[RMDB]
RNA sequence: GGGAACGACUCGAGUAGAGUCGAAAAGAGCUGAAGUACAGCAAGAACGACGCGAUCCUUGGCAAAGCGUCGAAGAUAAGCGUGCCGAUUGCCAAGGAUUAACGGCACGCGAGGCGAAGACGCCAGAGGUGCGUAGGAUAUUCGUAUCCUACGCACCAAAAGAAACAACAACAACAAC
Reactivity to 2A3 in 0.01 (KOAc 150mM, MgCl2 10mM, bicine 150mM(pH8.5), 24C), signal-to-noise 3, nucleotides 027 to 126: g150a010g000c030u030g020a160a050g160u200a210c010a000g000c000a000a040g080a040a070c020g000a000c000g000c000g030a020u000c000c000u020u000g000g000c060a140a100a050g000c020g000u020c020g000a030a000g040a050u260a030a010g000c000g000u010g000c000c000g090a130u000u130g000c000c000a010a020g000g000a000u010u120a060a020c000g000g000c000a000c000g010c000g000a030g000g010c000g020a120a100g060a200c030g010c010c040a070g040a020
Reactivity to DMS in 0.01 (KOAc 150mM, MgCl2 10mM, bicine 150mM(pH8.5), 24C), signal-to-noise 2, nucleotides 027 to 126: g040a080g000c000u000g000a180a100g030u010a170c030a000g070c000a160a090g000a200a300c000g000a010c080g000c020g000a220u040c080c000u050u000g000g000c000a030a040a150g000c000g050u000c010g070a110a030g000a050u040a050a290g000c000g100u020g000c000c050g000a070u000u040g010c010c010a000a090g000g000a060u000u000a000a090c000g010g050c030a000c000g000c040g000a040g000g050c020g000a130a150g000a200c000g060c000c080a100g000a090

An RNA of 177 nucleotides, treated with 2A3 and DMS and read out base by base.
2A3 adducts were read by reverse transcription with SuperScript II with manganese.
The 2A3 profile rests on 2,252 reads.